Chemical mapping of a 177-nucleotide RNA with 2A3 and DMS. 2A3 adducts were read by reverse transcription with SuperScript II with manganese. The DMS profile rests on 3,059 reads. 2A3 is a SHAPE reagent: it acylates the 2'-hydroxyl of flexible nucleotides of all four kinds. The reactions ran in a buffer of 150 mM KOAc, 10 mM MgCl2 and 150 mM bicine (pH 8.5), at 24 C.
[RMDB]
RNA sequence: GGGAACGACUCGAGUAGAGUCGAAAAUGGAGGUGCCUCUGUUUGCCGAGGAUGGGCUCUGGGGAAGCUGGUGUGCAGAGGCUAGGUGCCCAGCCUUGCUUUAGGAAAGCCUCACAAAGUCUGGGGCCACGUUCAUGGAUUUCGAUCCAUGAACGUGAAAAGAAACAACAACAACAAC
Reactivity to 2A3 in 0.01 (KOAc 150mM, MgCl2 10mM, bicine 150mM(pH8.5), 24C), signal-to-noise 2, nucleotides 027 to 126: u120g020g000a030g030g070u090g030c010c000u040c020u040g030u080u200u200g050c060c040g070a040g080g020a060u080g040g020g000c000u000c050u090g060g000g020g030a000a020g010c060u080g060g100u100g070u060g000c030a010g020a000g030g050c000u000a000g000g050u050g000c010c020c020a010g020c000c000u030u050g000c010u080u090u190a070g000g100a140a080a000g010c000c010u000c010a060c080a010a210a020g050u060c060u040g030g010g000g020c000
Reactivity to DMS in 0.01 (KOAc 150mM, MgCl2 10mM, bicine 150mM(pH8.5), 24C), signal-to-noise 3, nucleotides 027 to 126: u010g010g020a120g010g000u000g020c080c020u000c010u000g000u000u010u020g000c070c050g000a080g020g010a100u010g010g010g020c030u000c050u010g000g010g000g020a240a080g000c010u000g030g030u000g000u010g000c040a070g000a170g000g000c030u010a030g010g010u000g010c000c010c020a190g000c010c010u000u000g000c060u000u000u020a110g010g010a090a110a200g010c000c010u000c020a060c080a080a090a120g000u010c110u000g000g020g000g020c090